[RMDB]
Conditions: 150 mM KOAc, 10 mM MgCl2 and 150 mM bicine (pH 8.5), 24 C. The record gives the reactivity of an RNA of 177 nucleotides to 2A3 and DMS. It was measured as part of the RMDB library TTRDES. High 2A3 reactivity points to a flexible backbone, as in loops and unpaired stretches. The DMS profile rests on 1,838 reads.
RNA sequence: GGGAACGACUCGAGUAGAGUCGAAAAGAUAUGGACCCGGUGCACUGGCAACAGCUGGCUCGGAAACGAGCCAGACAUGCCAAACACCCGGGUCCUAAGUCAAAAGAUGUGUGUUCGCACACAUCAAGUAGUUAGCUAGGUUCGCCUAGCUAACUACAAAAGAAACAACAACAACAAC
Reactivity to 2A3 in 0.01 (KOAc 150mM, MgCl2 10mM, bicine 150mM(pH8.5), 24C), signal-to-noise 1, nucleotides 027 to 126: g030a020u080a060u110g000g000a000c000c020c020g000g040u040g030c150a030c160u000g010g000c010a060a050c010a300g030c010u000g000g000c000u020c000g010g000a060a080a060c010g000a000g010c010c000a000g000a000c020a000u030g000c020c000a040a070a000c030a000c000c080c020g000g000g000u000c000c000u020a000a000g010u010c030a050a000a010a160g020a010u020g010u010g030u000g030u050u160c300g010c130a000c000a010c000a000u000c000a000a070
Reactivity to DMS in 0.01 (KOAc 150mM, MgCl2 10mM, bicine 150mM(pH8.5), 24C), signal-to-noise 2, nucleotides 027 to 126: g000a030u010a300u000g000g000a020c000c000c000g000g010u000g010c140a300c300u000g040g000c020a070a070c270a120g000c010u000g000g000c000u000c010g040g010a110a100a180c030g020a000g020c000c010a010g000a010c090a170u010g000c000c000a000a140a190c120a070c210c060c030g020g000g010u000c000c000u020a010a090g000u020c060a050a100a140a120g020a010u000g020u000g020u000g020u000u020c270g010c010a020c000a010c000a000u010c000a040a060